[RMDB]
RNA sequence: GGGAACGACUCGAGUAGAGUCGAAAAAUGGUGAGCGCGUAUCGAAUGAAAAACGCAGUCAAAAUGAUGGUUGGGGCGCAAGCAUUUUAAACAAGCGUUUGAUUGAGGCGAUUAUUGAUUAUAACUAUUGCCAUGAAUUAGCAACGCAAUUGCUACGAUCACUCGCUCAAUUCGUUGAGCGAGUGAUAAAAGAAACAACAACAACAAC
Reactivity to DMS in 0.01 (KOAc 150mM, MgCl2 10mM, bicine 150mM(pH8.5), 24C), signal-to-noise 1, nucleotides 027 to 156: a150u000g030g030u000g010a120g050c070g020c050g020u020a180u000c020g010a160a120u000g000a070a080a050a040a030c030g020c060a210g000u000c100a020a080a090a080u000g000a070u010g000g030u010u000g010g050g000g060c060g030c000a000a090g000c030a040u010u000u010u020a010a070a120c040a060a090g000c020g010u000u000u010g010a070u000u000g010a130g000g000c020g010a040u000u010a070u000u020g000a150u000u000a130u000a040a030c030u000a060u000u000g040c000c060a120u000g010a110a100u000u020a120g000c000a030a080c020g030c030a100a100u000u000g000c020u010a060c040g020
Reactivity to 2A3 in 0.01 (KOAc 150mM, MgCl2 10mM, bicine 150mM(pH8.5), 24C), signal-to-noise 2, nucleotides 027 to 156: a000u110g000g000u050g010a020g050c040g000c020g020u090a030u080c050g100a050a120u170g090a070a070a000a000a030c000g000c030a000g020u090c030a000a000a050a140u080g050a030u040g000g000u030u050g000g010g020g000c070g000c030a000a000g000c000a010u060u020u070u250a040a120a010c070a100a030g050c000g030u040u030u080g070a090u010u110g010a090g020g000c030g000a000u030u050a070u130u140g070a030u040u160a070u100a170a030c050u040a020u010u010g010c010c020a040u140g020a000a020u070u100a030g030c020a000a030c010g020c080a020a020u020u030g050c010u020a070c040g010